[RMDB]
Description:
Chemical mapping of a 177-nucleotide RNA with 2A3 and DMS. 2A3 adducts were read by reverse transcription with SuperScript II with manganese. Source: RMDB library OK2TRN, as collected in RNAgym. As a SHAPE reagent, 2A3 marks flexible, mostly unpaired nucleotides at the ribose 2'-OH.
RNA sequence: GGGAACGACUCGAGUAGAGUCGAAAACAACCGACACCAAAGCCGGCCAAAAUAGACAAGUGACCGCUCGUUGUACUGGCGUCGCCCAUCAGUGCGAGAUAGAACAGGACGGUUUCAGCCCCUUCGCCCUGAUAUAAUUGUUCGCAAUUAUAUCAGGAAAAGAAACAACAACAACAAC
Reactivity to 2A3 in 0.01 (KOAc 150mM, MgCl2 10mM, bicine 150mM(pH8.5), 24C), signal-to-noise 6, nucleotides 027 to 126: c020a010a040c010c020g040a040c020a020c050c050a090a050a030g040c030c020g040g000c010c030a060a070a020a120u160a080g080a060c070a130a040g040u020g100a060c010c020g030c040u020c040g100u070u090g090u080a070c030u030g020g010c020g100u080c030g010c000c030c000a090u120c040a010g050u040g080c020g010a020g020a080u120a080g080a060a020c020a050g020g050a010c020g030g000u020u050u060c040a030g020c010c010c000c020u030u050c030g040c000
Reactivity to DMS in 0.01 (KOAc 150mM, MgCl2 10mM, bicine 150mM(pH8.5), 24C), signal-to-noise 8, nucleotides 027 to 126: c090a110a130c050c020g020a090c070a060c070c080a060a110a160g010c060c020g020g010c030c040a040a040a090a100u010a090g010a080c120a070a100g010u000g000a050c050c030g010c050u000c040g020u000u000g020u000a060c060u000g000g010c090g020u000c070g010c030c020c040a090u000c070a040g010u000g010c030g010a050g010a130u010a060g000a070a060c070a070g000g010a050c040g000g010u000u010u000c070a100g010c030c010c010c060u000u000c080g020c120